The record gives the reactivity of an RNA of 177 nucleotides to 2A3 and DMS. Reactivities are given for positions 27 through 126. Source: RMDB library M2PK50, as collected in RNAgym. In probing experiments dimethyl sulfate is read out at A N1 and C N3, which are open when not base-paired. Values are in units of 0.01, from 0 to 300, in steps of 10.

[RMDB]
RNA sequence: GGGAACGACUCGAGUAGAGUCGAAAACGCUGAAGGUUCGCCUUCAGCGAAAUGCUAGAAAACGAUCAAAACUAGCAAUAACAUAAAUAAAGAUCGAAAUAAAAACGGGGAGCUUCGGCUCCCCGAACAUGGUAUUAACGUUCGCGUUAAUACCAUGAAAAGAAACAACAACAACAAC
Reactivity to 2A3 in 0.01 (KOAc 150mM, MgCl2 10mM, bicine 150mM(pH8.5), 24C), signal-to-noise 2, nucleotides 027 to 126: c010g000c000u000g000a020a000g030g010u030u110c090g080c010c000u010u000c000a010g000c000g000a000a000a000u020g000c000u000a000g010a010a060a050a090c040g020a010u030c020a000a060a000a020c010u000a010g010c020a010a100u070a040a000c000a010u120a050a060a000u050a030a080a040g000a000u020c000g010a030a140a030u150a050a100a040a010a010c020g000g010g010g000a000g010c000u060u060c130g100g020c000u000c000c000c000c000g000a000a000
Reactivity to DMS in 0.01 (KOAc 150mM, MgCl2 10mM, bicine 150mM(pH8.5), 24C), signal-to-noise 2, nucleotides 027 to 126: c020g040c000u020g000a000a010g020g020u000u010c240g030c000c000u000u000c010a020g000c010g000a020a060a080u000g010c000u000a000g020a000a050a280a090c030g020a030u000c010a070a040a070a010c010u000a010g000c000a040a160u010a040a210c050a040u010a010a000a030u010a070a090a180g000a010u010c000g000a180a130a080u000a060a060a040a090a080c030g010g000g010g010a030g000c000u010u010c170g040g010c010u000c000c000c000c030g000a000a010